[RMDB]
Background
Chemical mapping of a 177-nucleotide RNA with DMS and 2A3. The RNA was probed in 150 mM KOAc, 10 mM MgCl2 and 150 mM bicine (pH 8.5) at 24 C.
RNA sequence: GGGAACGACUCGAGUAGAGUCGAAAAGCUGCAGGCCACCCUCGCGCUGCUGUAUCAGCAGACCGCCGACGCGCAGGGCGCAUUCGCCCGCGAGAGCACCACGCUGGCCGGCGCGCAGCAGCGCCUGGAAAACAUCAAGAUUCGUCUUGAUGUUUUCAAAAGAAACAACAACAACAAC
Reactivity to DMS in 0.01 (KOAc 150mM, MgCl2 10mM, bicine 150mM(pH8.5), 24C), signal-to-noise 9, nucleotides 027 to 126: g010c030u000g010c060a120g010g010c060c070a150c050c020c010u010c160g010c020g020c000u000g020c010u000g010u000a110u010c130a100g020c030a030g010a110c150c030g010c010c020g010a130c050g010c030g020c070a130g020g000g010c030g020c300a190u000u010c040g010c030c030c070g010c040g000a080g000a080g000c040a070c130c100a130c100g000c010u000g020g020c060c020g010g010c020g010c140g010c030a030g010c020a030g010c020g000c010c120u000g010
Reactivity to 2A3 in 0.01 (KOAc 150mM, MgCl2 10mM, bicine 150mM(pH8.5), 24C), signal-to-noise 8, nucleotides 027 to 126: g020c020u100g020c040a050g010g110c030c020a060c020c010c000u040c040g010c000g000c010u030g000c010u010g030u070a160u190c070a040g040c010a020g050a130c010c020g000c000c010g040a060c030g040c010g000c130a250g000g030g000c030g010c060a290u250u300c030g000c010c030c010g020c010g010a060g010a000g020c020a030c100c020a040c070g000c020u030g040g010c050c020g000g000c020g000c000g000c010a010g000c000a000g010c010g000c000c010u040g060
For DMS, 16,588 sequencing reads were counted. 2A3 adducts were read by reverse transcription with SuperScript II with manganese.